Description:
Chemical mapping of a 177-nucleotide RNA with DMS and 2A3. Values cover nucleotides 27 to 126. The reactions ran in a buffer of 150 mM KOAc, 10 mM MgCl2 and 150 mM bicine (pH 8.5), at 24 C. For 2A3, 1,669 sequencing reads were counted. DMS adducts were read by reverse transcription with MarathonRT. The DMS profile rests on 1,383 reads.

[RMDB]
RNA sequence: GGGAACGACUCGAGUAGAGUCGAAAAGCAUUCCGAGUGCCUGAGCUGGUCGACGUCCAGCUCCCUCGGGACCACGCUGCUCUGGGCGGAAGAGUCUUCUGACUUUUCUAGCCUAUUCAGCUUCGCGCACGGAGAUGUAGUUCGCUACAUCUCCGUGAAAAGAAACAACAACAACAAC
Reactivity to DMS in 0.01 (KOAc 150mM, MgCl2 10mM, bicine 150mM(pH8.5), 24C), signal-to-noise 2, nucleotides 027 to 126: g020c140a200u000u000c000c020g010a000g020u000g040c300c170u000g000a010g050c000u000g000g000u010c120g010a170c300g020u000c000c010a020g000c010u000c000c010c000u000c010g020g000g000a030c080c020a120c260g000c010u000g000c010u010c000u010g000g000g030c000g000g000a000a000g010a020g000u010c000u010u010c300u030g010a020c000u000u000u000u000c000u000a060g010c010c000u000a010u000u000c000a050g000c020u000u000c120g000c070g040
Reactivity to 2A3 in 0.01 (KOAc 150mM, MgCl2 10mM, bicine 150mM(pH8.5), 24C), signal-to-noise 2, nucleotides 027 to 126: g030c030a000u080u000c000c010g000a000g040u120g080c070c170u110g020a000g000c020u010g010g060u100c140g280a280c140g110u060c000c000a030g000c000u000c000c010c010u050c000g000g000g000a010c000c000a060c050g000c000u010g000c000u000c000u010g010g000g000c010g000g000a000a020g000a020g020u000c000u250u080c190u230g000a000c000u080u040u000u050c020u080a190g000c010c000u000a010u040u040c010a000g020c000u060u060c080g000c010g000